[RMDB]
RNA sequence: GGGAACGACUCGAGUAGAGUCGAAAAGGCACUAUCUUCGGAUAGUGCCAAAACGGGAAAACGGCCUCCCGAAAAGUAAAGAUCGAAACGAUCAAAAGGCCGAAAUCUCCCGGUUCGCCGGGAGAAACAGUAAAUAGGGGUUCGCCCCUAUUUACUGAAAAGAAACAACAACAACAAC
Reactivity to 2A3 in 0.01 (KOAc 150mM, MgCl2 10mM, bicine 150mM(pH8.5), 24C), signal-to-noise 2, nucleotides 027 to 126: g010g010c000a010c010u020a000u040c020u050u050c140g010g000a000u000a000g010u000g000c000c000a000a000a000a000c010g030g030g010a000a040a030a120c000g000g000c000c010u000c020c000c000g020a130a120a010a000g100u120a050a070a090g010a000u010c010g080a300a200a080c110g000a020u010c010a000a050a020a070g020g000c000c010g000a000a000a000u000c000u000c010c010c010g000g060u030u030c210g010c020c010g000g000g000a010g000a010a000a000
Reactivity to DMS in 0.01 (KOAc 150mM, MgCl2 10mM, bicine 150mM(pH8.5), 24C), signal-to-noise 2, nucleotides 027 to 126: g010g000c000a010c010u000a010u000c000u000u010c210g020g000a000u000a000g000u000g000c000c000a000a010a050a250c010g010g010g020a040a050a060a140c030g010g010c000c010u000c000c010c000g000a040a070a110a150g000u000a060a070a110g000a020u000c000g010a080a170a140c110g020a000u000c000a030a050a050a030g000g000c010c000g030a020a080a110u010c000u000c000c000c000g000g030u000u010c210g030c000c030g020g000g000a000g010a010a030a090